[RMDB]
RNA sequence: GGGAACGACUCGAGUAGAGUCGAAAAAGCGCUAGAUAUGUACAUGGGUGUUCCCCCUUAUCUGUGUACUAUAUCUGUUUGGACUUGCGGGAUAGGGGGAGUAGUGCAAGUUUGGGUGGUGCGCGAAGUGUAUAUUAUAAUUCGUUAUAAUAUACACAAAAGAAACAACAACAACAAC
Reactivity to 2A3 in 0.01 (KOAc 150mM, MgCl2 10mM, bicine 150mM(pH8.5), 24C), signal-to-noise 5, nucleotides 027 to 126: a000g020c020g010c030u020a000g000a010u010a010u010g000u010a000c000a010u020g060g000g010u150g030u070u080c000c000c000c000c000u060u110a090u150c020u010g020u000g000u010a010c040u060a010u010a010u020c020u030g080u070u070u050g010g010a020c000u010u030g000c020g030g040g040a060u060a030g000g010g000g010g000a010g020u040a010g010u000g000c010a020a000g010u010u040u030g050g010g040u160g030g020u050g020c000g010c010g050a110a050
Reactivity to DMS in 0.01 (KOAc 150mM, MgCl2 10mM, bicine 150mM(pH8.5), 24C), signal-to-noise 5, nucleotides 027 to 126: a190g000c020g020c020u020a020g000a010u000a010u000g000u000a000c000a010u000g010g010g020u020g000u020u000c000c000c000c010c010u010u030a030u030c000u020g000u000g000u000a000c000u040a010u000a010u010c000u010g010u010u020u010g010g000a050c040u000u000g010c020g010g010g010a180u040a050g010g000g000g000g010a040g000u020a080g010u010g010c010a030a030g010u000u010u000g000g000g000u020g000g000u010g010c020g010c020g010a060a100
The record gives the reactivity of an RNA of 177 nucleotides to 2A3 and DMS. For DMS, 41,381 sequencing reads were counted.